Structure probing data (DMS and 2A3) for a 177-nucleotide construct. High DMS reactivity at an A or C suggests that its Watson-Crick edge is free. The DMS profile rests on 1,848 reads. It was measured as part of the RMDB library OK2TRN. For 2A3, 975 sequencing reads were counted.

[RMDB]
RNA sequence: GGGAACGACUCGAGUAGAGUCGAAAAGCCUGCAUGUUGAUGCCCGAUUGUUUGGUUACGAUGCUUCUCUGGCGGCUGAAUUAGGAAAGAUGGUGGCCAUAAACAAACCGUCGAAUGGGAGUAAGGCAUACCUUUAGCGGUUCGCCGCUAAAGGUAUAAAAGAAACAACAACAACAAC
Reactivity to DMS in 0.01 (KOAc 150mM, MgCl2 10mM, bicine 150mM(pH8.5), 24C), signal-to-noise 2, nucleotides 027 to 126: g000c040c010u000g000c080a100u000g000u000u010g000a050u020g030c030c030c020g000a120u020u010g000u000u000u000g010g000u000u010a050c070g000a060u000g020c050u000u000c030u000c030u010g020g020c150g010g010c030u010g030a060a070u000u000a120g010g020a100a060a090g010a100u000g000g000u000g000g020c010c020a060u000a030a040a110c060a050a070a070c030c020g030u000c060g010a120a100u020g000g000g010a080g010u010a070a050g010g020c090
Reactivity to 2A3 in 0.01 (KOAc 150mM, MgCl2 10mM, bicine 150mM(pH8.5), 24C), signal-to-noise 1, nucleotides 027 to 126: g070c000c020u020g030c060a090u090g020u150u070g090a110u050g030c030c020c070g040a120u080u000g070u050u010u150g010g000u020u030a040c030g030a050u090g100c000u080u060c070u000c040u050g040g020c020g000g030c030u060g070a100a060u140u050a080g050g030a070a050a030g070a020u070g020g030u030g020g090c020c040a020u090a030a030a010c030a020a100a000c010c020g050u120c080g030a040a030u110g030g000g000a020g030u030a110a000g010g020c000